[RMDB]
RNA sequence: GGGAACGACUCGAGUAGAGUCGAAAAUGCUUACGCAAGAUGGCUGUUUCCACUUAUGCAAAGCCCGCUGAGCACUGCUCUCUUACAGCCAUUAAAAAAAUCGCAAAACUAAAACGAGAGCGAAUAAGCUGAUAGGCGCAUUCGUGCGCCUAUCAGCAAAAGAAACAACAACAACAAC
Reactivity to 2A3 in 0.01 (KOAc 150mM, MgCl2 10mM, bicine 150mM(pH8.5), 24C), signal-to-noise 1, nucleotides 027 to 126: u050g000c080u080u200a100c070g000c070a030a080g000a030u010g040g000c000u000g000u080u030u060c010c000a120c070u170u080a050u300g000c000a060a060a060g030c000c010c000g000c070u010g100a030g000c030a000c050u100g000c000u000c000u130c000u000u110a110c000a010g000c000c020a000u150u150a000a000a000a010a000a000a010u300c100g000c130a020a000a270a050c010u250a110a030a000a000c080g000a000g000a000g030c000g000a160a170u260a090a030